Chemical mapping of a 177-nucleotide RNA with DMS and 2A3. For 2A3, 1,315 sequencing reads were counted. The RNA was probed in 150 mM KOAc, 10 mM MgCl2 and 150 mM bicine (pH 8.5) at 24 C. The data come from the RNA Mapping Database (RMDB), library OK2TST. For DMS, 1,726 sequencing reads were counted.

[RMDB]
RNA sequence: GGGAACGACUCGAGUAGAGUCGAAAAGGGGAUGGCCUGCCGCACCAGGUUCUUCGAUCAGUUCUUCCUUGAUGCCACCCACAGUGGCAUCGGCCAGUUCGUCAUCCUGGCGUCCGGGCUGGACGCCGUCAGAGAUGCCUUUCGAGGCAUCUCUGACAAAAGAAACAACAACAACAAC
Reactivity to DMS in 0.01 (KOAc 150mM, MgCl2 10mM, bicine 150mM(pH8.5), 24C), signal-to-noise 2, nucleotides 027 to 126: g030g020g000g020a070u010g010g000c010c020u000g010c030c030g030c070a080c070c040a080g000g010u000u010c060u000u010c020g010a050u020c110a090g000u000u000c070u000u010c040c050u000u020g000a040u000g010c010c000a010c000c070c220a130c230a160g010u010g000g000c000a010u000c010g000g020c040c030a060g010u010u020c040g000u010c060a100u000c020c020u000g020g000c000g000u000c000c000g020g010g020c110u010g030g010a010c010g030c010c020
Reactivity to 2A3 in 0.01 (KOAc 150mM, MgCl2 10mM, bicine 150mM(pH8.5), 24C), signal-to-noise 1, nucleotides 027 to 126: g030g020g050g020a000u030g030g020c000c020u030g020c040c020g020c020a090c010c010a020g080g000u090u060c000u050u020c040g080a100u100c060a040g010u020u070c020u060u030c040c050u010u140g020a010u040g000c010c000a030c010c070c010a100c050a050g010u000g000g000c000a010u010c000g000g020c020c010a000g010u080u060c010g050u050c050a110u030c000c020u060g000g000c030g000u000c000c010g100g200g040c150u230g010g000a000c000g010c000c000